[RMDB]
RNA sequence: GGGAACGACUCGAGUAGAGUCGAAAAGAUAUGGACCAGUUCGAUAAGCUCCAGUCGGAAACGACUGAAGAGCUUUUGACGAACGUCCUAAGUCAAACAGUGCAAGUACUUCGGUACUUGCACUGAAGAAUAUGGAGUCGUUCGCGACUCCAUAUUCAAAAGAAACAACAACAACAAC
Reactivity to 2A3 in 0.01 (KOAc 150mM, MgCl2 10mM, bicine 150mM(pH8.5), 24C), signal-to-noise 2, nucleotides 027 to 126: g020a010u040a030u090g000g010a000c080c130a090g000u010u010c010g000a080u020a300a010g030c010u000c000c000a000g000u000c000g010g020a050a030a040c010g000a000c010u020g050a130a060g000a010g000c000u000u000u000u020g030a010c010g010a000a000c010g000u020c000c010u020a080a030g040u020c030a050a090a120c000a070g000u010g010c000a000a000g000u010a010c000u080u220c300g110g000u000a000c010u030u040g000c000a000c010u010g000a000a000
Reactivity to DMS in 0.01 (KOAc 150mM, MgCl2 10mM, bicine 150mM(pH8.5), 24C), signal-to-noise 2, nucleotides 027 to 126: g010a020u010a230u010g000g010a030c080c160a150g020u000u000c010g010a090u010a010a010g000c000u000c000c000a010g010u000c000g000g000a090a030a130c010g000a000c000u000g010a090a070g000a020g010c000u010u000u000u000g010a190c050g000a010a010c010g000u000c010c010u000a050a110g010u000c010a080a060a270c020a010g010u000g000c000a010a010g000u000a000c000u000u010c170g040g000u000a000c010u000u000g000c010a000c000u000g010a020a060